[RMDB]
Structure probing data (DMS and 2A3) for a 207-nucleotide construct. 2A3 adducts were read by reverse transcription with SuperScript II with manganese. It was measured as part of the RMDB library RNAMAK. The 2A3 profile rests on 4,172 reads. The reactions ran in a buffer of 150 mM KOAc, 10 mM MgCl2 and 150 mM bicine (pH 8.5), at 24 C.

RNA sequence: GGGAACGACUCGAGUAGAGUCGAAAACUUACGAUAGUACUUCGGUACUAUCGUAAGAAAAAGCGUACUACCAUCCCAGACCCUAGGGUCCCAAAUAGGACCCAAGCUGGGAGUGGUAUCGCAAAAACAUCGAGAAUACUUCGGUAUUCUCGAUGAAGUUAAAUGAGAUGUUCGCAUCUCAUUUAACAAAAGAAACAACAACAACAAC
Reactivity to DMS in 0.01 (KOAc 150mM, MgCl2 10mM, bicine 150mM(pH8.5), 24C), signal-to-noise 2, nucleotides 027 to 156: c000u000u000a030c000g000a020u000a000g020u010a000c000u000u020c300g050g020u000a010c010u000a000u010c000g020u000a000a000g010a060a010a080a070a180g010c000g030u010a060c080u000a030c010c000a110u000c000c000c010a030g000a150c060c040c090u010a200g030g000g030u000c010c000c000a020a110a250u010a060g000g000a040c000c000c000a020a020g000c000u000g020g040g010a010g000u000g040g000u000a050u000c020g000c010a020a070a100a130a160c010a010u000c000g010a030g030a030a010u000a000c000u000u000c300g080g020u000a000u000u000c000u000c000g000a000u000g000a010a090
Reactivity to 2A3 in 0.01 (KOAc 150mM, MgCl2 10mM, bicine 150mM(pH8.5), 24C), signal-to-noise 4, nucleotides 027 to 156: c000u000u000a000c010g000a010u000a000g000u000a000c000u030u070c300g050g010u000a000c000u000a000u000c000g010u000a000a000g000a030a030a000a000a000g020c020g020u080a060c030u010a000c000c020a040u030c010c000c010a080g110a300c150c060c160u270a210g000g000g020u020c010c000c010a190a300a090u300a090g000g000a000c000c000c000a010a000g000c000u000g000g000g010a010g010u020g000g000u010a020u300c010g000c000a050a010a020a040a020c000a000u000c000g000a000g000a010a000u000a000c010u060u120c270g040g000u000a000u010u000c000u000c000g000a000u000g000a010a020